This 177-nucleotide RNA was probed chemically with 2A3 and DMS. Values are in units of 0.01, from 0 to 300, in steps of 10.

RNA sequence: GGGAACGACUCGAGUAGAGUCGAAAACUUCAAUGGUUCGCCAUUGAAGAAACAUGGUAAACGCUGACACCAUGAAAGAUCGAAAAACGAUGAAAGCGUAAAAAAGUAGUCAGUUCGCUGACUACAAGACUUACGAUUAGUUCGCUAAUCGUAAGUCAAAAGAAACAACAACAACAAC
Reactivity to 2A3 in 0.01 (KOAc 150mM, MgCl2 10mM, bicine 150mM(pH8.5), 24C), signal-to-noise 4, nucleotides 027 to 126: c010u000u000c000a000a000u010g020g000u030u050c160g060c050c000a010u000u010g000a000a000g000a020a030a000c010a010u000g000g030u080a170a120a010c000g010c030u030g050a020c010a010c090c000a000u000g010a080a060a010g050a030u060c030g070a100a100a000a040a140c050g000a020u090g080a070a040a000g020c020g000u060a080a090a000a030a010a030g000u010a000g000u000c010a000g000u010u060c220g010c070u000g000a000c000u000a000c000a000a020
Reactivity to DMS in 0.01 (KOAc 150mM, MgCl2 10mM, bicine 150mM(pH8.5), 24C), signal-to-noise 5, nucleotides 027 to 126: c000u000u000c000a000a000u000g000g020u000u010c240g040c010c000a010u000u010g000a010a000g020a120a090a150c010a010u000g000g000u000a070a090a040c010g010c020u000g020a200c160a050c000c000a020u000g000a050a110a120g000a100u000c040g010a060a070a060a120a180c110g000a040u000g000a080a090a070g010c000g020u000a000a060a080a070a080a110g000u000a010g000u000c000a010g020u000u010c240g010c000u000g000a010c000u000a000c000a030a050
Annotation
The reactions ran in a buffer of 150 mM KOAc, 10 mM MgCl2 and 150 mM bicine (pH 8.5), at 24 C. For 2A3 the reverse transcriptase was SuperScript II with manganese.